The record gives the reactivity of an RNA of 207 nucleotides to DMS and 2A3. For 2A3 the reverse transcriptase was SuperScript II with manganese. For 2A3, 4,827 sequencing reads were counted. Source: RMDB library RNAMAK, as collected in RNAgym. The reactions ran in a buffer of 150 mM KOAc, 10 mM MgCl2 and 150 mM bicine (pH 8.5), at 24 C. Values cover nucleotides 27 to 156.

RNA sequence: GGGAACGACUCGAGUAGAGUCGAAAAGCGUACUACAAGUCUCUAGCGUGGCCGAGGAUCUGUGGAUAACUAUCCCAAAUAGGAUAGGAAGCCACAGGGAGGCUCGGGCUUGUAUCGCAAAGCUGCACUUUAUAGCUUCGGCUAUAAAGUGCAGCAACUCUUGUGUAUUCUUCGGAAUACACAAGAGAAAAGAAACAACAACAACAAC
Reactivity to DMS in 0.01 (KOAc 150mM, MgCl2 10mM, bicine 150mM(pH8.5), 24C), signal-to-noise 1, nucleotides 027 to 156: g000c030g060u000a170c100u020a020c010a000a070g010u010c000u020c100u020a240g050c160g060u000g050g050c000c050g010a110g020g000a050u000c000u000g020u000g010g000a040u010a190a270c000u000a000u000c000c000c010a070a160a300u000a020g000g000a030u000a000g020g000a180a150g010c000c000a010c000a020g010g000g000a040g050g020c030u020c030g020g000g000c010u000u000g000u000a000u020c040g000c020a040a080a150g010c000u000g000c020a000c010u000u010u010a000u000a000g020c000u010u010c300g060g010c000u000a020u000a000a000a040g040u000g010c020a050g000c000a010a020
Reactivity to 2A3 in 0.01 (KOAc 150mM, MgCl2 10mM, bicine 150mM(pH8.5), 24C), signal-to-noise 4, nucleotides 027 to 156: g000c010g030u110a110c060u010a000c030a020a000g020u000c040u020c070u300a120g140c080g140u230g060g000c000c010g040a250g020g000a010u000c000u000g020u010g010g000a000u020a090a060c000u000a000u010c020c020c010a210a300a160u260a100g000g000a000u000a000g010g010a080a120g000c000c000a000c010a000g000g000g000a010g000g000c010u000c010g000g000g000c000u000u010g010u010a030u300c010g000c000a050a030a050g000c020u010g000c000a000c000u000u000u010a000u000a000g000c000u040u040c300g100g000c000u000a000u000a010a000a000g000u000g000c000a000g000c000a000a000